The record gives the reactivity of an RNA of 170 nucleotides to DMS and 2A3. The DMS profile rests on 25,215 reads. For DMS the reverse transcriptase was MarathonRT. For 2A3, 16,695 sequencing reads were counted.
[RMDB]
RNA sequence: GGGAACGACUCGAGUAGAGUCGAAAAAAGAUGUUGUUCUACAAGGCUUAAAAGCUUGUUGUUACGUGGGUGUGCAAACUGUUGAAGAUCUGCGUGCUCGCAUGACAUAUGUAUGCCAGUGUGGUGGGGACUCCCCAGUUCGCUGGGGAGAAAAGAAACAACAACAACAAC
Reactivity to DMS in 0.01 (KOAc 150mM, MgCl2 10mM, bicine 150mM(pH8.5), 24C), signal-to-noise 5, nucleotides 027 to 129: a100a040g020a110u030g010u010u010g000u000u000c090u050a060c060a120a050g010g030c010u030u040a060a080a090a130g020c060u030u040g030u000u010g000u070u010a060c100g020u000g010g020g020u030g010u000g000c020a010a010a040c010u000g030u090u000g000a080a020g010a100u040c080u000g020c000g070u040g030c000u020c050g000c000a150u000g030a000c030a050u060a080u050g010u020a040u000g050c040c020a070g020u030g000u000g030g060u070g000g000g000g000a220
Reactivity to 2A3 in 0.01 (KOAc 150mM, MgCl2 10mM, bicine 150mM(pH8.5), 24C), signal-to-noise 8, nucleotides 027 to 129: a000a000g100a060u080g000u060u010g020u010u000c000u040a050c030a090a050g040g030c010u150u280a110a090a030a030g060c000u020u050g070u050u000g000u010u050a000c030g010u030g000g010g000u040g000u000g020c010a020a030a110c060u050g060u240u250g100a050a010g010a160u040c020u010g000c000g030u030g020c010u010c020g000c020a010u060g010a010c000a010u110a020u100g130u050a040u170g000c010c000a070g030u020g000u020g150g070u080g000g020g000g030a030